RNA sequence: GGGAACGACUCGAGUAGAGUCGAAAAAGGCUUAAUCGACCUGGGCGUGUCGAUCUACCACCUGAUCCAUCAAGAGCCUGCUCCUCCGGACCCGCUGGUGGAAAAGUUCUCGGUCUACGAAAGCUACAUUCAGGACACCGAGAAAACCGGUCUACGCCCAUACACUAAUCUUCGGAUUAGUGUAUGGAAAAGAAACAACAACAACAAC
Reactivity to 2A3 in 0.01 (KOAc 150mM, MgCl2 10mM, bicine 150mM(pH8.5), 24C), signal-to-noise 3, nucleotides 027 to 156: a000g030g000c030u070u080a040a020u060c010g010a010c020c020u060g000g050g020c010g000u040g010u020c010g000a040u010c040u090a080c010c030a030c000c030u070g080a130u080c040c020a070u070c110a130a100g010a030g100c000c030u000g020c040u030c000c010u070c060c080g030g050a080c030c030c020g030c110u060g000g020u030g010g000a050a070a020a000g060u040u010c000u010c000g030g000u000c050u080a040c040g050a090a050a000g060c070u120a090c070a150u040u090c060a030g050g030a020c000a020c050c010g000a000g020a010a010a000a020c040c010g070g000u040c030u040a040c060g030c000
Reactivity to DMS in 0.01 (KOAc 150mM, MgCl2 10mM, bicine 150mM(pH8.5), 24C), signal-to-noise 2, nucleotides 027 to 156: a080g040g010c010u010u010a070a120u000c020g020a040c000c030u000g040g020g070c060g010u000g000u000c000g010a120u000c020u000a070c020c020a090c060c000u000g010a110u020c010c030a100u010c040a090a220g000a070g000c040c000u020g020c120u010c100c030u000c110c060g010g000a110c020c000c030g020c090u010g010g030u010g030g000a050a040a060a160g010u000u000c000u010c010g010g010u000c020u010a210c020g000a090a040a100g000c080u000a110c150a210u010u010c020a240g020g010a220c160a080c020c010g000a050g010a020a010a060a050c000c020g000g000u000c020u000a060c040g010c020
Background:
An RNA of 207 nucleotides, treated with 2A3 and DMS and read out base by base. 2A3 adducts were read by reverse transcription with SuperScript II with manganese. The 2A3 profile rests on 2,708 reads. High 2A3 reactivity points to a flexible backbone, as in loops and unpaired stretches. For DMS, 3,810 sequencing reads were counted.